[RMDB]
RNA sequence: GGGAACGACUCGAGUAGAGUCGAAAAUUUGGGAUGCAUAAGAAGGCUGGAGAGGCUUAUGGAGAAACUUAUGAUGGUUUGACUUACAGUUUUUCAACUUUACCAUGGUGCGAACGUGGUAUGUAUACAGUAGAAACUGUACUUUAAGUAUGUGUGAUCAGCAUGAUCGAUUCGUCGAUCAUGCUGAAAAAGAAACAACAACAACAAC
Reactivity to 2A3 in 0.01 (KOAc 150mM, MgCl2 10mM, bicine 150mM(pH8.5), 24C), signal-to-noise 2, nucleotides 027 to 156: u100u080u050g040g000g040a010u120g040c060a060u090a120a090g060a100a000g100g010c080u110g070g000a030g020a020g050g050c000u060u050a030u090g070g000a030g030a010a050a000c040u130u070a080u130g120a080u050g020g140u040u080u080g070a070c050u020u040a000c030a010g000u000u000u000u000u120c080a030a000c030u000u030u090a020c000c000a010u050g030g000u130g160c140g000a030a020c000g000u010g010g020u020a000u020g070u000a090u030a080c080a030g040u160a000g040a000a010a010c000u040g040u020a010c020u150u210u010a040a040g020u060a080u200g030u050g010u030g060a020
The record gives the reactivity of an RNA of 207 nucleotides to 2A3.